[RMDB]
RNA sequence: GGGAACGACUCGAGUAGAGUCGAAAAGAGUGUGAUCGGGCGGCUCGACGGCCAGCAGCGAAGGUUCUCGCAGGGGGUGAAGUUGAUCGCCGCGGGUCCGCCGCUCCAGCCAGCGCAGCGGUGGUGGCAUUCUUAAAGGAUUCGUCCUUUAAGAAUGAAAAGAAACAACAACAACAAC
Reactivity to DMS in 0.01 (KOAc 150mM, MgCl2 10mM, bicine 150mM(pH8.5), 24C), signal-to-noise 9, nucleotides 027 to 126: g000a070g020u000g010u010g010a060u010c060g020g010g020c020g010g010c040u000c030g010a090c060g010g010c010c050a070g010c050a080g010c020g010a060a160g010g010u000u010c080u000c030g020c080a140g010g010g000g010g010u000g000a090a140g010u000u000g000a070u010c240g010c010c010g010c020g000g000g000u010c010c010g010c020c010g010c030u000c030c050a150g010c050c040a070g010c060g020c090a070g010c050g010g010u000g000g010u000g010g000
Reactivity to 2A3 in 0.01 (KOAc 150mM, MgCl2 10mM, bicine 150mM(pH8.5), 24C), signal-to-noise 7, nucleotides 027 to 126: g070a030g040u120g010u080g040a080u090c060g020g080g010c010g010g000c010u030c030g130a160c020g050g000c020c010a040g020c020a010g010c040g020a050a030g120g080u150u070c040u020c070g030c080a090g060g030g010g020g010u070g070a120a030g040u100u070g040a070u100c050g010c020c000g070c010g030g000g010u040c020c000g000c010c000g000c010u020c010c000a030g030c010c010a040g030c030g000c050a040g020c020g050g010u040g010g020u030g030g000